[RMDB]
RNA sequence: GGGAACGACUCGAGUAGAGUCGAAAACGCUAUUAGACAAACUCAAAGCAGCGCUAGGCGCUCGCUAAACCAAGGAGUAAAAGACUAUGACUGUAGAGAACGCAGUACGUUCUUCCGAUUUUUCCGGUUUUAUCCAGCCUGACAUUGCACAGGCAUAGCCCUUCAGUUAAUUCGUUAACUGAAGGGCAAAAGAAACAACAACAACAAC
Reactivity to 2A3 in 0.01 (KOAc 150mM, MgCl2 10mM, bicine 150mM(pH8.5), 24C), signal-to-noise 3, nucleotides 027 to 156: c000g000c090u110a110u110u150a100g060a060c070a100a160a030c040u060c080a120a100a040g000c020a000g000c000g000c050u190a080g100g060c010g040c000u090c130g020c000u110a030a000a020c030c010a070a100g060g020a000g080u110a030a060a110a000g030a010c080u110a060u240g050a020c030u020g010u070a030g050a020g030a170a050c060g000c000a040g050u080a050c030g030u010u030c010u050u010c030c060g060a080u000u060u000u070u100c040c020g000g080u000u030u110u060a060u090c060c020a020g000c010c000u010g010a060c050a170u150u240g000c100a020c000a030g000g060c000a000u040a000
Reactivity to DMS in 0.01 (KOAc 150mM, MgCl2 10mM, bicine 150mM(pH8.5), 24C), signal-to-noise 1, nucleotides 027 to 156: c040g030c030u020a080u000u010a170g080a080c000a020a100a080c050u000c000a090a240a140g040c060a080g020c020g060c030u010a190g050g010c010g040c020u000c050g000c010u000a020a080a190c060c040a050a120g050g000a040g000u000a060a160a100a130g000a140c070u010a040u000g000a050c050u000g000u010a140g010a060g000a030a040c020g060c020a190g000u000a300c000g000u000u000c000u000u000c020c000g030a050u010u010u010u000u010c060c020g040g000u000u000u000u000a050u020c070c060a100g000c040c000u000g030a220c030a170u000u000g030c070a140c060a020g050g000c000a060u000a160

Annotation: The record gives the reactivity of an RNA of 207 nucleotides to 2A3 and DMS. The reactions ran in a buffer of 150 mM KOAc, 10 mM MgCl2 and 150 mM bicine (pH 8.5), at 24 C. For 2A3, 1,610 sequencing reads were counted. 2A3 adducts were read by reverse transcription with SuperScript II with manganese.